[RMDB]
RNA sequence: GGGAACGACUCGAGUAGAGUCGAAAAAGUAGUCAGCCGUACGCGGCUGACUACAAGUAUGAGUAAGUCGCAAUGAAAGAAUGAUGUCUCAGGAUGAGAUUAGGACGAGUAAUUACGGUUCAUACAAAUCACAUGGCAGAUUCGUCUGCCAUGUGAUAAAAGAAACAACAACAACAAC
Reactivity to DMS in 0.01 (KOAc 150mM, MgCl2 10mM, bicine 150mM(pH8.5), 24C), signal-to-noise 2, nucleotides 027 to 126: a110g030u000a000g020u000c010a000g000c000c000g010u030a130c220g050c030g000g000c010u000g000a030c000u000a000c010a090a070g000u000a010u000g010a050g000u010a030a050g010u020c040g030c120a050a010u000g010a160a130a140g000a040a070u040g020a050u010g000u000c000u050c000a180g010g000a130u030g010a010g000a010u010u000a150g000g020a280c050g000a030g010u000a050a010u000u010a080c000g020g010u020u000c020a020u000a020c020a090a090
Reactivity to 2A3 in 0.01 (KOAc 150mM, MgCl2 10mM, bicine 150mM(pH8.5), 24C), signal-to-noise 3, nucleotides 027 to 126: a000g020u010a000g000u000c000a000g020c000c010g020u060a090c230g020c000g090g030c000u000g000a000c000u000a000c000a000a000g010u000a000u000g000a000g060u080a070a000g160u300c000g000c000a010a000u060g020a040a000a040g040a000a050u130g080a050u170g060u010c020u020c040a170g140g190a230u280g010a030g000a020u020u100a050g000g080a030c020g010a000g000u010a010a010u010u020a010c000g030g010u040u010c000a010u000a010c020a020a210

Conditions: 150 mM KOAc, 10 mM MgCl2 and 150 mM bicine (pH 8.5), 24 C. Structure probing data (DMS and 2A3) for a 177-nucleotide construct. As a SHAPE reagent, 2A3 marks flexible, mostly unpaired nucleotides at the ribose 2'-OH. DMS (dimethyl sulfate) methylates the pairing face of unpaired adenines and cytosines. DMS adducts were read by reverse transcription with MarathonRT. Reactivities are given for positions 27 through 126.